RNA sequence: GGGAACGACUCGAGUAGAGUCGAAAAUGAGGAACUGGUAGAAGCAUUCGUUGAGCGUCGAAAAGGGAAAAUCACUGCAGAUGAAGCACGUCAGUUGCUCAAGGAAGAUGUCAACUACUUUGGGGUCUAGCUGGUGAGUAUUCGUACUCACCAGCUAAAAAGAAACAACAACAACAAC
Reactivity to 2A3 in 0.01 (KOAc 150mM, MgCl2 10mM, bicine 150mM(pH8.5), 24C), signal-to-noise 6, nucleotides 027 to 126: u100g020a020g050g040a030a040c030u030g070g000u070a130g040a230a030g060c070a270u020u050c020g030u090u100g040a050g040c010g040u040c060g090a010a010a130a090g090g080g040a060a100a020a070u110c050a030c020u110g000c010a000g010a110u030g060a070a010g020c040a000c060g040u040c030a040g010u010u040g050c010u020c000a010a030g070g010a060a110g040a070u090g080u200c030a090a030c050u080a020c020u090u130u130g020g000g010g000u010c040
Reactivity to DMS in 0.01 (KOAc 150mM, MgCl2 10mM, bicine 150mM(pH8.5), 24C), signal-to-noise 3, nucleotides 027 to 126: u020g000a120g000g020a050a070c030u000g000g010u000a070g030a070a200g000c000a110u000u010c070g040u000u000g000a020g050c010g030u000c090g000a040a050a090a100g020g000g030a070a020a050a070u020c030a050c090u010g060c030a300g010a120u010g000a080a040g020c040a100c140g010u010c110a080g000u030u000g020c010u000c010a060a040g010g000a130a110g020a060u020g030u020c090a080a110c010u040a030c020u000u010u020g000g010g000g000u030c030